[RMDB]
RNA sequence: GGGAACGACUCGAGUAGAGUCGAAAAGUGAGGUGUCGUGUGGUGAGAAAGGCUAUCUCAGGACCUUAUUGGAAAUGCAUUGAAUGGACUACCACAUCAGCCUGAAAAAUCCAAUGGCAUGUGGCACCUCCAUGUCGGAAUUCGUUCCGACAUGGAGAAAAGAAACAACAACAACAAC
Reactivity to 2A3 in 0.01 (KOAc 150mM, MgCl2 10mM, bicine 150mM(pH8.5), 24C), signal-to-noise 3, nucleotides 027 to 126: g100u090g020a030g010g030u030g000u060c030g030u020g020u040g060g000u040g010a100g050a040a060a000g030g020c060u030a030u090c060u020c070a020g030g030a040c010c030u120u160a220u140u220g010g030a040a050a050u060g020c050a060u070u120g060a050a050u040g020g020a010c020u050a030c020c050a010c010a040u070c090a010g020c000c010u030g040a050a030a000a000a000u040c060c010a010a030u080g020g030c030a030u100g040u050g040g020c020a010c020
Reactivity to DMS in 0.01 (KOAc 150mM, MgCl2 10mM, bicine 150mM(pH8.5), 24C), signal-to-noise 5, nucleotides 027 to 126: g030u000g010a040g010g030u000g000u000c020g030u000g010u000g010g010u000g000a070g020a120a100a080g000g010c060u000a070u010c070u000c040a030g010g000a300c030c020u000u010a120u000u010g020g000a040a140a100u000g020c300a060u000u020g010a090a100u000g000g000a220c060u010a090c020c020a030c050a040u000c110a130g000c010c010u010g010a010a050a090a060a130u030c050c030a030a090u000g010g010c010a080u010g020u000g010g000c040a010c050

This 177-nucleotide RNA was probed chemically with 2A3 and DMS. 2A3 adducts were read by reverse transcription with SuperScript II with manganese.